Source information: This 177-nucleotide RNA was probed chemically with DMS and 2A3. The DMS profile rests on 1,090 reads. The RNA was probed in 150 mM KOAc, 10 mM MgCl2 and 150 mM bicine (pH 8.5) at 24 C.
RNA sequence: GGGAACGACUCGAGUAGAGUCGAAAAUAUGCAAACACAAAUCAAAGUUCGUGGAUAUCAUCUCGACGUUUACCAGCACGUCAACAACGCCCGCUACCUUGAAUUUCUCGAAGAAGCCCGCUGGGAACAUGGUAAUCCUGUUCGCAGGAUUACCAUGAAAAGAAACAACAACAACAAC
Reactivity to DMS in 0.01 (KOAc 150mM, MgCl2 10mM, bicine 150mM(pH8.5), 24C), signal-to-noise 2, nucleotides 027 to 126: u000a090u010g020c060a060a090a040c120a070c090a040a090a080u010c100a060a100a080g030u000u000c080g030u010g030g010a090u000a070u010c070a080u020c040u010c130g050a070c030g000u000u010u020a140c050c030a050g020c110a060c040g000u000c040a060a040c100a140a090c150g000c030c010c030g030c040u010a030c080c020u010u000g020a040a130u000u000u000c030u000c030g000a060a060g010a160a100g000c070c080c070g040c040u000g000g010g010a050a180
Reactivity to 2A3 in 0.01 (KOAc 150mM, MgCl2 10mM, bicine 150mM(pH8.5), 24C), signal-to-noise 2, nucleotides 027 to 126: u190a020u050g030c020a060a070a010c030a030c020a050a100a120u230c020a020a040a180g040u070u060c020g020u070g070g000a020u050a030u130c040a020u020c050u060c100g020a020c020g020u030u070u000a110c000c010a010g000c020a010c010g020u020c000a000a030c030a040a000c060g070c050c010c010g060c050u050a060c010c020u080u000g000a110a070u190u050u020c120u010c050g130a150a090g020a090a020g090c020c010c000g060c050u020g020g040g000a010a040